[RMDB]
RNA sequence: GGGAACGACUCGAGUAGAGUCGAAAAGAUAUGGACACGUCAACACUUCGUUGAAAUCGGAAACGAUGGAGAAGGUUGAGCGUGUCCUAAGUCAAAAGGAUCUUAUGUCUUCGGACAUAAGAUCCAAGCUAUUCCAAACCUUCGGGUUUGGAAUAGCAAAAGAAACAACAACAACAAC
Reactivity to 2A3 in 0.01 (KOAc 150mM, MgCl2 10mM, bicine 150mM(pH8.5), 24C), signal-to-noise 2, nucleotides 027 to 126: g010a010u040a030u140g000g010a000c000a000c020g040u050c010a020a040c300a090c230u040u000c030g300u240u070g000a060a030a000u030c020g000g050a060a040a060c020g010a010u020g000g020a040g010a020a010g000g000u010u010g020a040g040c000g000u000g000u000c000c000u000a000a000g000u000c020a000a000a030a140g010g010a000u000c000u000u000a010u020g020u020c020u020u190c300g060g000a000c000a000u000a000a010g000a000u000c000c000a000a000
Reactivity to DMS in 0.01 (KOAc 150mM, MgCl2 10mM, bicine 150mM(pH8.5), 24C), signal-to-noise 2, nucleotides 027 to 126: g000a040u000a300u000g000g010a010c000a000c000g010u000c000a000a020c000a180c000u000u000c000g000u000u030g010a050a180a020u000c010g000g010a160a100a240c010g010a020u000g030g020a110g010a010a040g000g000u010u000g010a060g030c010g000u000g000u000c000c000u000a000a100g020u020c050a090a100a090a130g010g010a020u000c000u000u000a000u010g000u000c000u000u010c240g010g000a000c000a010u000a010a000g010a010u000c000c000a000a030